[RMDB]
RNA sequence: GGGAACGACUCGAGUAGAGUCGAAAAGCCUUAAACUAAUGAGUAAGGAAAAUACCGCACCGGUUGACACCGGUGUUAUGGCGUGAACCGCGUUCACGUCGGCUUCCAAUUUCUGGCGGGCUACAGGGAUCUAGUCUAUCUUCGGAUAGACUAGAUCAAAAGAAACAACAACAACAAC
Reactivity to 2A3 in 0.01 (KOAc 150mM, MgCl2 10mM, bicine 150mM(pH8.5), 24C), signal-to-noise 2, nucleotides 027 to 126: g020c020c020u060u080a150a160a070c050u080a150a160u190g040a050g090u050a090a100g040g000a010a050a020a070u130a030c020c020g050c000a000c040c020g000g100u060u180g100a040c040a000c120c000g010g010u010g010u000u020a040u060g000g000c010g010u020g010a020a020c060c200g060c110g100u000u020c000a000c000g010u010c040g010g000c020u030u000c020c020a080a170u050u130u030c020u030g020g070c070g040g000g000c010u050a060c070a090g120g070
Reactivity to DMS in 0.01 (KOAc 150mM, MgCl2 10mM, bicine 150mM(pH8.5), 24C), signal-to-noise 3, nucleotides 027 to 126: g010c000c000u000u010a110a090a070c070u020a040a110u000g000a120g010u000a070a110g010g000a020a020a130a110u000a100c090c080g000c000a010c000c000g000g000u000u000g020a180c220a150c000c000g010g000u000g000u010u010a040u020g020g000c010g020u000g000a010a000c000c240g020c300g020u000u010c010a010c010g010u000c010g010g020c130u000u000c020c020a080a110u000u000u000c090u000g020g010c070g020g000g010c020u000a060c170a090g000g000